[RMDB]
The record gives the reactivity of an RNA of 177 nucleotides to 2A3 and DMS. DMS adducts were read by reverse transcription with MarathonRT. For 2A3 the reverse transcriptase was SuperScript II with manganese. The reactions ran in a buffer of 150 mM KOAc, 10 mM MgCl2 and 150 mM bicine (pH 8.5), at 24 C.

RNA sequence: GGGAACGACUCGAGUAGAGUCGAAAACUUAACUGGCCAGGUGGGGAAAAACCGAGAGGUUCAAGCUUACCGGGCAGAAAACUGGGGUCAGUAGUACUAAACAGCCCUAGUGGCAGUGACGAAGGUAAUACUGGAACCGAUUCGUCGGUUCCAGUAUAAAAGAAACAACAACAACAAC
Reactivity to 2A3 in 0.01 (KOAc 150mM, MgCl2 10mM, bicine 150mM(pH8.5), 24C), signal-to-noise 2, nucleotides 027 to 126: c000u060u000a050a020c020u030g050g010c000c000a090g030g000u010g000g000g000g010a130a020a000a000a040c030c000g040a040g030a020g030g020u010u000c080a100a030g060c000u010u000a000c000c000g000g010g030c000a010g050a010a040a000a000c040u050g020g000g020g030u080c070a040g090u090a000g020u100a130c050u150a080a220a000c030a030g000c010c000c020u030a000g020u010g010g000c040a040g020u020g090a060c060g050a080a000g050g010u190a100
Reactivity to DMS in 0.01 (KOAc 150mM, MgCl2 10mM, bicine 150mM(pH8.5), 24C), signal-to-noise 3, nucleotides 027 to 126: c040u010u050a190a060c030u000g000g000c040c020a060g030g030u020g000g000g000g000a100a160a070a020a000c000c010g000a240g040a220g020g000u000u000c060a060a220g020c020u000u000a010c000c050g010g000g000c000a040g000a080a050a100a040c030u000g010g000g000g000u010c040a100g010u000a070g000u060a160c130u020a110a080a010c090a190g010c000c000c020u030a000g000u000g000g000c030a010g020u000g000a070c220g010a120a050g010g000u030a070